[RMDB]
RNA sequence: GGGAACGACUCGAGUAGAGUCGAAAACUCUCUGUGACACACCAAACGGGUAUGUCGUCAAAUUUUCAGCACUGGGAUGGACUACAGAGGGAACUAUAGAAGGGACCACGUCAUCCUGCAAGAUAGAUAUAUCACCUCCAUUCGUGGAGGUGAUAUAAAAAGAAACAACAACAACAAC
Reactivity to DMS in 0.01 (KOAc 150mM, MgCl2 10mM, bicine 150mM(pH8.5), 24C), signal-to-noise 4, nucleotides 027 to 126: c050u000c030u000c030u010g000u000g000a010c020a030c060a020c020c020a100a150a200c220g000g010g030u000a030u000g040u000c000g010u010c150a040a110a130u010u000u000u010c100a090g020c110a100c200u020g000g000g000a060u000g010g000a090c020u000a180c070a020g020a080g010g020g000a090a120c070u010a120u010a110g010a140a100g000g000g010a160c040c030a070c220g010u010c040a090u010c010c000u000g010c210a110a090g000a150u000a040g000a180
Reactivity to 2A3 in 0.01 (KOAc 150mM, MgCl2 10mM, bicine 150mM(pH8.5), 24C), signal-to-noise 2, nucleotides 027 to 126: c010u000c020u000c020u030g030u090g030a000c010a000c000a020c010c000a190a300a240c170g100g000g010u060a040u040g030u020c010g070u040c020a060a090a100u140u030u060u150c090a020g110c030a010c110u110g050g030g030a020u000g040g040a050c030u060a030c110a030g110a100g080g000g020a020a020c020u040a050u070a260g150a100a020g040g000g030a010c000c000a050c050g000u000c020a010u010c000c010u030g010c010a040a040g050a100u110a010g120a020